[RMDB]
RNA sequence: GGGAACGACUCGAGUAGAGUCGAAAAGCGCAUCUCGUGCACCUCAGACGGCUCCGACGCACGCGAGUCAAUCACCAGCGUCGGGCCGAUGCGCUGCACGCGGAGCGCCAAAGGACGCUCCGGAACGCAUCAUGAUCAGGUUCGCCUGAUCAUGAUGAAAAGAAACAACAACAACAAC
Reactivity to DMS in 0.01 (KOAc 150mM, MgCl2 10mM, bicine 150mM(pH8.5), 24C), signal-to-noise 5, nucleotides 027 to 126: g010c060g010c080a110u020c040u010c000g010u000g020c020a020c100c020u020c030a030g020a160c000g020g000c000u020c020c010g000a020c000g030c020a110c300g010c180g000a050g000u000c240a130a100u000c030a090c040c130a280g000c010g010u010c000g000g000g010c000c000g020a050u000g000c050g010c190u010g000c010a010c000g010c030g020g000a020g000c000g000c030c030a050a150a150g000g020a050c010g000c000u000c000c010g000g000a120a070c170g010
Reactivity to 2A3 in 0.01 (KOAc 150mM, MgCl2 10mM, bicine 150mM(pH8.5), 24C), signal-to-noise 9, nucleotides 027 to 126: g040c030g000c060a230u050c040u030c070g000u010g000c000a010c010c000u060c020a070g080a300c000g000g000c040u080c190c010g000a000c000g020c050a070c090g120c080g040a050g130u180c090a040a160u140c030a040c070c030a010g000c000g000u000c000g000g000g000c000c000g000a000u010g000c020g000c000u000g000c000a000c000g030c020g000g000a000g010c000g000c000c000a130a190a030g120g020a040c020g000c020u000c000c000g030g030a090a020c070g000
Structure probing data (DMS and 2A3) for a 177-nucleotide construct. The reactions ran in a buffer of 150 mM KOAc, 10 mM MgCl2 and 150 mM bicine (pH 8.5), at 24 C. For 2A3, 14,662 sequencing reads were counted. It was measured as part of the RMDB library OK1LIB. For DMS the reverse transcriptase was MarathonRT. For 2A3 the reverse transcriptase was SuperScript II with manganese.